An RNA of 177 nucleotides, treated with 2A3 and DMS and read out base by base. The RNA was probed in 150 mM KOAc, 10 mM MgCl2 and 150 mM bicine (pH 8.5) at 24 C. Source: RMDB library OK1LIB, as collected in RNAgym.
[RMDB]
RNA sequence: GGGAACGACUCGAGUAGAGUCGAAAAUAAUAAAGACCUGUGUCAAAGCAGUCACUGACUUAGAUCCAGAACCGUACCAGGGAGUGUCAGAAGGAACAGCGGGAUCUGAAGUUCACAGGUAUAGAGAUGAAUGCUGCCUAUUCGUAGGCAGCAUUCAAAAAGAAACAACAACAACAAC
Reactivity to 2A3 in 0.01 (KOAc 150mM, MgCl2 10mM, bicine 150mM(pH8.5), 24C), signal-to-noise 1, nucleotides 027 to 126: u110a000a060u080a020a120a020g130a000c000c000u070g030u000g020u000c060a130a130a040g000c000a000g140u210c000a000c130u010g180a000c000u040u140a060g040a090u000c020c000a000g090a070a130c010c000g010u030a060c090c050a020g050g000g000a110g020u060g060u060c050a050g040a160a070g080g000a000a010c000a000g040c040g000g000g000a090u080c000u070g040a030a000g010u190u000c000a000c020a000g000g000u000a000u040a000g080a000g000a060
Reactivity to DMS in 0.01 (KOAc 150mM, MgCl2 10mM, bicine 150mM(pH8.5), 24C), signal-to-noise 2, nucleotides 027 to 126: u040a050a030u000a010a210a120g010a040c000c010u010g000u000g000u000c120a100a190a130g000c090a070g000u000c120a140c110u020g000a040c000u000u020a060g000a050u010c040c010a190g010a100a120c040c080g000u000a070c210c040a060g050g010g010a100g000u000g000u010c080a060g050a070a130g030g000a020a030c060a150g000c050g000g000g000a020u000c000u000g000a010a100g000u040u050c000a010c000a000g000g050u000a060u000a040g010a080g000a210